Description
An RNA of 207 nucleotides, treated with DMS and 2A3 and read out base by base. Source: RMDB library M2RFPK, as collected in RNAgym. The RNA was probed in 150 mM KOAc, 10 mM MgCl2 and 150 mM bicine (pH 8.5) at 24 C.
RNA sequence: GGGAACGACUCGAGUAGAGUCGAAAAAGGUGAUUUCUCCUGCACCUUUAUCAAUGGAGGAACUCGACUUUGCUGUGGGUCCCAAGGGGACCUUAGGUGCAGACAGUUACCGGCGGUGAAGUGUGAGCAUAGGUUCGUGUCUUCGGACACGAACCAACAAUCUCAACAUGUUCGCAUGUUGAGAUUGAAAAGAAACAACAACAACAAC
Reactivity to DMS in 0.01 (KOAc 150mM, MgCl2 10mM, bicine 150mM(pH8.5), 24C), signal-to-noise 2, nucleotides 027 to 156: a020g010g030u000g020a300u000u000u000c000u000c010c010u010g000c020a040c000c000u030u000u010a070u000c280a090a090u010g010g020a070g000g030a040a100c030u000c040g010a050c020u010u000u010g020c030u010g030u010g020g020g000u020c010c020c030a150a180g050g010g020g000a010c010c010u000u000a010g040g010u010g000c020a180g000a080c130a120g010u000u000a030c000c010g010g000c010g000g010u000g020a030a020g010u010g010u000g010a090g020c030a110u000a080g020g040u000u000c010g080u010g000u010c000u000u040c300g070g000a010c000a020c010g020a010a000c000c000a010a050
Reactivity to 2A3 in 0.01 (KOAc 150mM, MgCl2 10mM, bicine 150mM(pH8.5), 24C), signal-to-noise 5, nucleotides 027 to 156: a000g020g000u010g000a030u060u030u010c010u000c010c000u130g070c020a010c000c010u070u230u120a050u020c070a020a060u300g030g000a020g000g010a020a020c000u000c020g020a010c010u000u010u020g010c000u030g020u090g030g000g000u020c000c000c020a190a140g100g040g010g000a010c000c000u020u050a030g010g000u020g000c010a040g120a300c030a060g040u060u060a000c000c020g020g020c000g000g010u030g010a010a020g040u090g100u130g110a000g050c090a120u120a180g000g010u000u000c000g000u010g010u000c000u030u080c210g010g000a000c010a000c000g000a000a000c000c000a000a000